[RMDB]
RNA sequence: GGGAACGACUCGAGUAGAGUCGAAAAUCCAUGAUGAAUUUCACGGCGUUGAUCGUCCGAAGUGAUGAUGCAUCCUUGUCCUCUAAGAAGUUCUGAGAUCUGAUCAGGGUUUGUUCGCAAACCCUGAGAAGUAGCCAUCUUUCGAGAUGGCUACUUCAAAAGAAACAACAACAACAAC
Reactivity to 2A3 in 0.01 (KOAc 150mM, MgCl2 10mM, bicine 150mM(pH8.5), 24C), signal-to-noise 2, nucleotides 027 to 126: u020c020c020a030u040g030a030u030g010a040a080u060u060u060c030a040c090g000g080c040g060u050u090g070a050u060c030g000u020c030c040g130a190a070g100u130g110a050u020g000a010u070g010c030a050u040c010c030u050u110g050u100c010c010u000c030u070a100a050g010a040a020g100u050u000c000u030g080a070g020a230u040c100u120g080a130u030c000a010g000g020g000u000u000u020g020u050u000c050g000c080a010a000a010c000c020c000u000g010a000
Reactivity to DMS in 0.01 (KOAc 150mM, MgCl2 10mM, bicine 150mM(pH8.5), 24C), signal-to-noise 3, nucleotides 027 to 126: u010c020c020a100u010g010a120u000g000a070a050u000u010u000c020a150c140g010g010c120g010u000u000g010a050u010c040g020u010c020c020g010a080a090g030u000g010a050u000g010a050u000g010c050a050u000c030c110u000u000g000u010c000c040u010c100u010a110a100g010a070a060g030u000u000c020u000g000a200g000a050u000c100u020g010a280u010c000a010g000g000g010u000u000u000g000u000u000c200g020c000a000a010a010c000c000c000u000g000a000